The record gives the reactivity of an RNA of 207 nucleotides to DMS and 2A3. The 2A3 profile rests on 15,343 reads. For DMS the reverse transcriptase was MarathonRT. For DMS, 19,849 sequencing reads were counted. High DMS reactivity at an A or C suggests that its Watson-Crick edge is free. The reactions ran in a buffer of 150 mM KOAc, 10 mM MgCl2 and 150 mM bicine (pH 8.5), at 24 C.
RNA sequence: GGGAACGACUCGAGUAGAGUCGAAAAGAAUGUUACCAUUGUCCGACCAAUGGUAACAUGAUUGCCAUCCUUGAGUAUUGACGCUACAAUACUGGAUCAUAAGCGACUAUGAUGAAGGAUGGCAAUGCUAACUACAUGGUCGGAUAUGUGGUUAGGAUGCAUUUAUUAUGUUCGCAUAAUAAAUGCAAAAAGAAACAACAACAACAAC
Reactivity to DMS in 0.01 (KOAc 150mM, MgCl2 10mM, bicine 150mM(pH8.5), 24C), signal-to-noise 5, nucleotides 027 to 156: g010a120a040u000g010u000u010a020c000c000a030u000u010g010u000c010c090g020a080c110c010a040a070u000g010g010u000a030a040c040a010u010g010a060u000u000g000c000c010a020u000c000c000u000u000g010a110g020u000a010u000u000g000a280c150g030c200u010a160c020a040a030u010a030c020u010g010g020a050u000c020a030u000a040a150g020c190g010a160c100u000a050u000g010a040u000g010a070a030g020g010a050u000g010g050c000a000a000u000g020c040u010a050a070c060u000a060c080a080u000g010g010u000c010g000g010a050u000a040u000g030u000g000g020u000u000a100g020g010a220
Reactivity to 2A3 in 0.01 (KOAc 150mM, MgCl2 10mM, bicine 150mM(pH8.5), 24C), signal-to-noise 8, nucleotides 027 to 156: g110a030a050u070g000u030u040a010c000c000a000u010u020g030u050c040c050g040a060c020c010a020a060u040g010g010u020a020a010c000a000u030g010a010u000u010g000c000c000a000u010c000c000u020u070g090a000g020u010a000u010u020g070a090c080g080c190u180a080c130a020a000u000a010c000u020g090g050a010u010c010a010u010a070a050g090c050g120a060c080u020a010u020g010a000u020g080a010a010g000g000a000u000g000g000c000a000a000u010g000c000u030a030a050c020u040a030c020a090u070g030g000u030c030g000g010a020u020a050u050g010u000g010g020u040u070a060g060g050a070